[RMDB]
RNA sequence: GGGAACGACUCGAGUAGAGUCGAAAAGAUAUGGAGAUAGGCAGCUUGGAUUUACGAAUAUGUCGGAAACGACAUAGGAGUUGUCAGCUGGCCUAUCUCCUAAGUCAAAGCAGUCUUCGGACUGCAAGUCUCAGAUAAUCUUCGGAUUAUCUGAGACAAAAGAAACAACAACAACAAC
Reactivity to DMS in 0.01 (KOAc 150mM, MgCl2 10mM, bicine 150mM(pH8.5), 24C), signal-to-noise 4, nucleotides 027 to 126: g000a050u000a300u000g010g010a000g020a010u000a000g000g010c000a010g010c000u000u000g020g000a040u000u010u000a000c020g010a300a240u000a000u000g000u010c000g000g000a110a070a230c010g000a010c000a010u000a010g000g010a300g000u000u000g000u000c000a020g010c000u000g020g020c010c000u000a000u000c000u000c000c000u010a000a030g000u010c020a060a130a150g030c000a010g010u000c000u000u000c190g010g000a010c000u000g000c010a010a030
Reactivity to 2A3 in 0.01 (KOAc 150mM, MgCl2 10mM, bicine 150mM(pH8.5), 24C), signal-to-noise 2, nucleotides 027 to 126: g030a010u130a030u140g030g010a030g010a030u020a000g020g000c020a000g010c010u170u300g170g020a140u300u230u190a010c000g000a030a020u000a000u030g000u010c010g010g030a050a060a050c010g010a000c010a000u000a000g000g010a020g000u020u000g000u000c000a000g000c010u000g010g020c000c000u000a000u000c000u000c000c000u000a000a000g000u030c010a020a000a040g010c000a000g020u020c010u040u130c210g070g010a010c000u000g000c000a010a010